[RMDB]
RNA sequence: GGGAACGACUCGAGUAGAGUCGAAAACAUGCGCGUCCGAAGUAUGGGAAGCAUAAGUGGACACACCGCCUUCCGCUCUUAUCAUUGUAUCUCGAAUACUUUCUCGGUGCUUUGAGCCUAGGCGCGGUCUACUGUUGGUGUUCGCGCCGACGGUAGAAAAAGAAACAACAACAACAAC
Reactivity to DMS in 0.01 (KOAc 150mM, MgCl2 10mM, bicine 150mM(pH8.5), 24C), signal-to-noise 9, nucleotides 027 to 126: c100a070u020g010c030g010c040g010u010c010c030g010a080a110g010u020a060u020g010g000g010a050a100g010c080a050u010a070a070g010u010g000g000a090c160a090c070a090c080c050g000c050c020u000u000c050c090g000c030u010c040u010u010a060u010c050a050u010u010g010u010a030u010c030u020c090g000a070a050u020a060c090u010u010u010c040u010c060g010g010u000g000c030u000u000u000g000a080g000c030c040u010a110g000g000c010g010c060g000g000
Reactivity to 2A3 in 0.01 (KOAc 150mM, MgCl2 10mM, bicine 150mM(pH8.5), 24C), signal-to-noise 9, nucleotides 027 to 126: c040a030u140g010c020g000c020g060u020c020c010g040a070a010g030u080a060u150g050g010g020a040a010g020c020a040u040a140a050g050u040g050g020a010c010a000c010a020c090c020g020c010c000u030u010c010c010g030c020u010c010u050u100a080u060c030a060u020u080g020u070a070u030c080u030c070g060a110a040u080a180c010u040u070u020c040u010c020g010g000u030g010c000u030u020u050g030a030g010c010c020u030a030g020g000c010g000c010g020g020